[RMDB]
RNA sequence: GGGAACGACUCGAGUAGAGUCGAAAAGGGGGACCCCCGAGACGCUGGAGACGCCCGGGAACAAGGAAAUAGAACAAGGUACGGUAGAAAAGAGCGAGCCUCCCGAUACGAGUUUGCCAGGACCUAUGACGCUGAAUGUUCGCAUUCAGCAAAAGAAACAACAACAACAAC
Reactivity to 2A3 in 0.01 (KOAc 150mM, MgCl2 10mM, bicine 150mM(pH8.5), 24C), signal-to-noise 9, nucleotides 027 to 129: g020g000g000g010g040a070c000c010c000c000c010g000a020g000a020c050g010c090u050g020g010a020g010a030c010g020c000c010c000g010g010g000a040a040c040a030a020g040g020a030a030a010u120a050g050a050a020c050a070a020g040g000u060a040c040g020g020u050a020g090a030a110a040a000g040a000g040c030g010a010g010c000c020u020c010c000c000g020a020u060a060c060g000a030g060u020u060u070g050c020c010a040g010g010a020c000c000u070a100u140g030a020c080
Reactivity to DMS in 0.01 (KOAc 150mM, MgCl2 10mM, bicine 150mM(pH8.5), 24C), signal-to-noise 7, nucleotides 027 to 129: g020g020g020g030g010a180c010c000c000c000c000g000a090g000a070c120g020c120u030g040g030a050g010a060c140g030c080c000c030g030g030g030a030a030c080a050a030g000g000a020a040a090u040a000g020a080a050c050a100a070g000g060u000a070c000g000g000u000a020g000a040a030a070a080g000a070g010c040g000a020g040c030c030u030c020c040c050g020a000u040a060c050g000a080g030u020u000u090g000c040c030a130g020g010a060c060c000u000a050u040g020a140c200
The record gives the reactivity of an RNA of 170 nucleotides to 2A3 and DMS. The DMS profile rests on 40,148 reads. For 2A3, 28,990 sequencing reads were counted. The reactions ran in a buffer of 150 mM KOAc, 10 mM MgCl2 and 150 mM bicine (pH 8.5), at 24 C.